[RMDB]
Record summary: This 177-nucleotide RNA was probed chemically with DMS.
RNA sequence: GGGAACGACUCGAGUAGAGUCGAAAAGAUAUGGAACCGUGGGAGGAUCAGACUACGAAGAACGUGUUCUAUCGGAAACGAUAGAACACGGGAGUAGUUGGGAUCCGAAGAACACGGUUCCUAAGUCCAAAUCCCACUUGUUCGCAAGUGGGAUUUGAAAAGAAACAACAACAACAAC
Reactivity to DMS in 0.01 (KOAc 150mM, MgCl2 10mM, bicine 150mM(pH8.5), 24C), signal-to-noise 2, nucleotides 027 to 126: g000a080u020a300u000g000g010a000a000c000c000g020u000g000g000g000a240g020g020a000u000c000a300g010a000c000u000a000c000g020a180a160g010a140a160c010g000u010g010u010u000c000u000a000u030c000g040g000a090a090a250c010g010a030u010a000g010a010a000c030a000c020g020g010g010a080g010u000a010g000u000u010g030g060g010a000u000c000c000g000a060a170g000a200a240c010a000c000g010g000u020u000c000c000u000a000a080g010u000c040
High DMS reactivity at an A or C suggests that its Watson-Crick edge is free.